[RMDB]
RNA sequence: GGGAACGACUCGAGUAGAGUCGAAAAAUGCACUGGUUCGCCAGUGCAUGAUUACCGAGAAAGUACCUCGGUAUAAAAGAGCAACCCUUGGAAACAAGGGAAUUCCGAACCGAUUCGUCGGUUCGAAAGUACAAAUGGACUUCGGUCCAUUUGUACUAAAAGAAACAACAACAACAAC
Reactivity to 2A3 in 0.01 (KOAc 150mM, MgCl2 10mM, bicine 150mM(pH8.5), 24C), signal-to-noise 1, nucleotides 027 to 126: a030u000g000c000a000c000u000g000g030u060u010c080g060c070c000a000g000u000g000c000a000u000g000a010u000u020a010c000c020g020a020g000a010a230a030g160u120a080c010c000u000c010g000g000u000a020u010a000a040a010a020g120a010g040c050a050a130c000c000c000u010u000g020g010a040a090a000c000a000a020g000g030g030a000a010u050u000c030c010g000a000a000c010c010g000a010u040u080c120g010u010c010g130g000u000u000c000g010a010a030
Reactivity to DMS in 0.01 (KOAc 150mM, MgCl2 10mM, bicine 150mM(pH8.5), 24C), signal-to-noise 3, nucleotides 027 to 126: a010u000g010c000a000c000u000g000g000u000u000c270g010c010c000a000g020u010g010c000a000u000g000a160u020u000a020c000c000g000a030g020a160a130a150g010u020a120c170c000u000c000g000g020u000a030u000a030a080a080a070g000a120g000c210a080a100c000c000c000u000u000g000g000a140a120a270c000a000a000g000g000g010a030a030u000u000c100c020g000a010a000c000c000g020a050u000u010c130g000u000c000g000g000u010u000c000g020a020a060
Description: An RNA of 177 nucleotides, treated with 2A3 and DMS and read out base by base. For 2A3, 2,319 sequencing reads were counted. It was measured as part of the RMDB library M2PK50. The DMS profile rests on 2,171 reads.